[RMDB]
Chemical mapping of a 207-nucleotide RNA with DMS and 2A3. Reactivities are given for positions 27 through 156. The DMS profile rests on 6,456 reads. For 2A3 the reverse transcriptase was SuperScript II with manganese. The RNA was probed in 150 mM KOAc, 10 mM MgCl2 and 150 mM bicine (pH 8.5) at 24 C.
RNA sequence: GGGAACGACUCGAGUAGAGUCGAAAAUGGAAAGCACAGUGCAGUAAGUAGGAUGCUGAGAUGGAACAGAAAUAGAUUUCACAGAGAUGGGUGCAAGGGUGACAUCUACACCCAGGAAGGUGUGUGAGGUGGGCCUCCUGGUGGGCAUGGCUUGCAAACCCGUAAUUUAGUUCGCUAAAUUACGGGUAAAAGAAACAACAACAACAAC
Reactivity to DMS in 0.01 (KOAc 150mM, MgCl2 10mM, bicine 150mM(pH8.5), 24C), signal-to-noise 3, nucleotides 027 to 156: u010g020g000a080a070a100g010c010a090c060a150g020u020g020c030a080g010u000a040a140g030u010a080g020g020a070u000g020c030u020g010a120g010a070u000g010g010a080a160c070a100g020a060a060a150u000a080g010a200u010u000u020c040a100c060a120g010a090g010a130u010g020g000g030u000g000c050a050a080g020g000g020u000g010a090c070a090u010c030u020a050c010a040c000c020c000a100g020g000a120a050g020g020u000g010u020g020u000g020a040g000g060u010g020g040g010c030c030u000c030c030u000g000g020u000g010g000g020c050a100u010g000g000c020u000u000g010c050a040a120
Reactivity to 2A3 in 0.01 (KOAc 150mM, MgCl2 10mM, bicine 150mM(pH8.5), 24C), signal-to-noise 3, nucleotides 027 to 156: u090g010g010a080a010a030g010c020a020c040a080g030u050g030c020a010g040u140a130a020g000u030a060g020g040a030u050g030c030u050g010a020g010a090u110g050g010a060a040c040a050g060a040a050a010u140a040g090a080u070u110u060c090a080c010a030g060a000g010a030u040g020g000g040u010g000c040a050a040g010g000g020u030g020a010c010a030u010c010u050a030c020a030c020c000c010a010g030g060a090a030g010g010u050g000u030g010u050g040a030g010g020u040g000g000g010c000c020u020c000c010u030g010g010u020g030g010g000c020a020u020g000g010c010u030u050g010c010a070a050